Conditions: 150 mM KOAc, 10 mM MgCl2 and 150 mM bicine (pH 8.5), 24 C. Structure probing data (2A3 and DMS) for a 177-nucleotide construct. Source: RMDB library TTRDES, as collected in RNAgym.

RNA sequence: GGGAACGACUCGAGUAGAGUCGAAAAGAUAUGGAUGUUUAGAGCUUUUGACGUUCCACUAUCGGAAACGAUAGGAGAACGAUAAGCUCUAUGCAUCCUAAGUCAAAAGUCUAAGUUCGCUUAGACACCAACAAAAUACCUUCGGGUAUUUUGUUGGAAAAGAAACAACAACAACAAC
Reactivity to 2A3 in 0.01 (KOAc 150mM, MgCl2 10mM, bicine 150mM(pH8.5), 24C), signal-to-noise 2, nucleotides 027 to 126: g060a000u110a030u150g000g000a000u000g010u000u030u030a020g000a000g010c020u120u210u190u300g260a190c040g020u000u000c040c010a040c060u000a000u010c010g000g020a090a050a000c030g000a000u000a000g010g040a100g010a030a000c000g000a020u070a110a030g000c000u000c000u000a000u020g000c010a000u000c000c010u000a010a010g040u020c030a060a040a070a160g000u000c000u010a010a000g000u040u200c220g060c240u010u030a010g000a020c020a060
Reactivity to DMS in 0.01 (KOAc 150mM, MgCl2 10mM, bicine 150mM(pH8.5), 24C), signal-to-noise 2, nucleotides 027 to 126: g000a020u000a300u020g000g000a000u010g000u000u000u000a000g010a010g010c000u010u000u020u030g000a210c070g010u000u000c000c250a190c000u000a000u000c000g010g000a080a110a160c000g010a010u000a000g020g030a300g000a000a020c000g000a130u000a030a000g000c010u000c000u010a000u000g000c020a000u000c000c000u000a010a090g000u000c050a150a080a180a100g000u000c010u000a010a030g000u000u030c280g030c020u000u000a020g010a010c010a270